The record gives the reactivity of an RNA of 177 nucleotides to DMS and 2A3. Conditions: 150 mM KOAc, 10 mM MgCl2 and 150 mM bicine (pH 8.5), 24 C. The 2A3 profile rests on 1,239 reads. Source: RMDB library OK1LIB, as collected in RNAgym. 2A3 adducts were read by reverse transcription with SuperScript II with manganese. For DMS, 1,770 sequencing reads were counted.

[RMDB]
RNA sequence: GGGAACGACUCGAGUAGAGUCGAAAAGUAACAUACGACAACCCUGUUGGUCGGCUGCCAGCUUCACGAUGCGGCCACCGUGGAGGGGCAUUUGAACAGGGGCCCGCGAGCGUGCCGCUGCGUCGUGACGAUAUAUCGCCUUCGGGCGAUAUAUCGUAAAAGAAACAACAACAACAAC
Reactivity to DMS in 0.01 (KOAc 150mM, MgCl2 10mM, bicine 150mM(pH8.5), 24C), signal-to-noise 2, nucleotides 027 to 126: g060u000a020a150c170a080u030a100c030g000a120c070a050a150c010c010c030u000g020u000u010g000g020u000c080g010g000c120u000g080c030c000a020g010c110u040u000c010a060c000g040a040u000g030c020g040g020c000c000a220c190c030g040u020g000g000a280g000g000g000g000c010a040u000u010u010g010a100a090c150a070g050g000g000g000c010c020c020g030c000g000a300g010c070g010u030g060c140c220g010c010u000g020c040g000u000c010g000u000g000
Reactivity to 2A3 in 0.01 (KOAc 150mM, MgCl2 10mM, bicine 150mM(pH8.5), 24C), signal-to-noise 3, nucleotides 027 to 126: g030u080a120a050c100a080u180a050c030g070a030c010a090a130c020c050c000u130g040u130u100g050g020u070c070g020g060c000u060g010c040c040a060g040c070u000u030c000a000c030g000a020u080g010c030g050g010c000c000a020c050c030g010u060g040g140a090g000g050g000g000c010a040u120u120u160g120a130a070c070a100g050g040g040g000c010c020c010g300c040g040a010g000c030g010u080g000c000c060g050c010u000g000c020g020u000c010g010u030g030